[RMDB]
RNA sequence: GGGAACGACUCGAGUAGAGUCGAAAAUCGAUGGCGUUCGCGCCAUCGAAGAGCCGUACCGCGUAGCACGCCGAUAGGAGUGAAGAUAUCCAAGGCCAUGGAGGAGGCGUGCUUUCGAGCACGCCAAGUCGGUACUACGUUUCGACGUAGUACCGACAAAAGAAACAACAACAACAAC
Reactivity to DMS in 0.01 (KOAc 150mM, MgCl2 10mM, bicine 150mM(pH8.5), 24C), signal-to-noise 1, nucleotides 027 to 126: u000c020g010a040u000g010g000c000g010u000u020c240g060c060g030c010c000a030u010c000g000a030a060g000a090g000c040c040g020u030a080c040c020g000c090g010u010a130g010c010a060c060g000c010c000g000a150u030a140g000g010a080g010u020g000a100a080g000a040u010a060u010c070c040a010a110g010g010c030c090a100u000g000g010a080g000g010a150g000g070c000g010u000g030c000u000u000u020c080g000a010g000c000a020c020g000c000c020a000a030
Reactivity to 2A3 in 0.01 (KOAc 150mM, MgCl2 10mM, bicine 150mM(pH8.5), 24C), signal-to-noise 1, nucleotides 027 to 126: u080c020g010a040u020g010g010c030g000u060u120c300g030c020g000c060c030a000u010c010g000a000a000g000a020g000c020c010g060u070a050c070c060g030c020g030u030a020g030c040a020c030g040c000c010g060a050u140a170g050g000a050g030u080g100a070a000g020a140u140a050u120c040c020a030a070g080g000c080c050a060u080g030g010a050g050g060a030g030g000c000g010u020g020c000u050u000u000c000g010a000g090c020a000c010g010c030c020a010a020